[RMDB]
RNA sequence: GGGAACGACUCGAGUAGAGUCGAAAACGCUGGGUAAGUGAUUAGGCUUGUAACGUCCUGACAUGGUAACUGAAGCGCGCACGGUUACCAACAGCAGGCGUUACAAGCCGAAGAUCACUUACCUGUGCUGAAGCGCGCACGGCAACCGAAAGGUGCGGCAUACCAUCGUCUUCGGACGAUGGUAUGCAAAAGAAACAACAACAACAAC
Reactivity to 2A3 in 0.01 (KOAc 150mM, MgCl2 10mM, bicine 150mM(pH8.5), 24C), signal-to-noise 2, nucleotides 027 to 156: c050g000c030u060g010g000g000u000a000a000g000u000g020a020u080u130a160g000g020c000u020u000g010u000a000a000c000g220u270c060c020u060g010a160c030a260u130g000g000u000a000a010c010u010g050a220a010g040c010g000c000g010c010a020c020g020g000u000u010a010c030c030a040a030c030a000g300c020a000g000g000c000g000u000u000a000c000a000a000g000c000c000g020a000a000g000a000u000c000a000c010u000u000a000c000c000u000g010u020g000c000u060g030a160a050g010c000g000c000g020c000a030c000g030g000c020a080a130c000c000g090a110a010a030g020g010u020g030c000g030
This 207-nucleotide RNA was probed chemically with 2A3. Conditions: 150 mM KOAc, 10 mM MgCl2 and 150 mM bicine (pH 8.5), 24 C. Source: RMDB library RNAMAK, as collected in RNAgym.